[RMDB]
RNA sequence: GGGAACGACUCGAGUAGAGUCGAAAAUAUUGUCCUGGCUCCACAAAGCACAUCUCAUACCAGUUCAGAUAUAAUCCCUCUAAGAAGCAGAAUGCCAUAUGACAGCAUAGGCUAAGAGCCAAGGACAGAACCAAGUGGAGUGGGGCUGGUAAGGAUAGUCACGAUACUGAUUCGUCAGUAUCGUGACAAAAGAAACAACAACAACAAC
Reactivity to 2A3 in 0.01 (KOAc 150mM, MgCl2 10mM, bicine 150mM(pH8.5), 24C), signal-to-noise 1, nucleotides 027 to 156: u140a050u010u080g000u040c000c000u000g020g010c060u030c070c010a160c120a190a120a000g030c060a110c000a090u020c010u020c000a000u040a020c010c000a010g030u110u110c030a000g050a070u020a080u010a200a080u010c020c040c050u070c030u060a250a110g000a030a000g000c000a000g160a270a180u150g020c000c000a130u060a020u180g140a090c110a100g160c070a250u000a000g050g030c040u070a150a030g000a000g000c000c000a000a030g000g000a030c000a000g000a000a000c000c000a000a090g130u050g000g000a060g020u090g000g050g000g000c000u000g020g000u020a020a020g110g080a020u250a080